[RMDB]
RNA sequence: GGGAACGACUCGAGUAGAGUCGAAAAUGCUGGCAACCCUGGUCCUCCCCGUGGAAGCCCUCCAUAGGCACCCAUCUCUUUACCCUGCCAUCUAUACUUUGAACUACCAUAAAGAUGGCUUUGAAUACUCUCUGGUUCAAUUCGUUGAACCAGAGAGAAAAGAAACAACAACAACAAC
Reactivity to 2A3 in 0.01 (KOAc 150mM, MgCl2 10mM, bicine 150mM(pH8.5), 24C), signal-to-noise 3, nucleotides 027 to 126: u030g010c010u030g020g020c020a000a100c000c000c020u040g000g090u110c030c020u050c010c000c010c010g010u070g060g020a060a030g000c020c010c000u040c000c030a110u140a060g070g000c010a060c010c000c000a090u030c020u000c010u080u090u090a110c060c020c020u040g000c000c000a040u010c000u020a100u030a140c080u180u060u040g020a120a070c010u070a140c080c090a080u180a170a150a010g000a040u030g030g030c010u000u060u000g040a020a030u140a040
Reactivity to DMS in 0.01 (KOAc 150mM, MgCl2 10mM, bicine 150mM(pH8.5), 24C), signal-to-noise 2, nucleotides 027 to 126: u010g000c110u030g000g030c060a070a060c010c040c000u010g030g010u010c040c000u010c030c070c000c020g060u090g010g020a090a220g010c170c020c010u000c020c030a050u000a060g010g000c010a070c080c020c000a050u040c030u000c040u020u010u000a140c180c000c020u010g000c000c000a010u000c000u000a100u010a090c090u130u020u020g000a040a080c170u040a060c060c020a070u000a040a070a010g060a060u000g000g000c020u000u060u020g000a090a080u010a120
This 177-nucleotide RNA was probed chemically with 2A3 and DMS.
Source: RMDB library OK1LIB, as collected in RNAgym.
DMS adducts were read by reverse transcription with MarathonRT.
For DMS, 1,844 sequencing reads were counted.
The reactions ran in a buffer of 150 mM KOAc, 10 mM MgCl2 and 150 mM bicine (pH 8.5), at 24 C.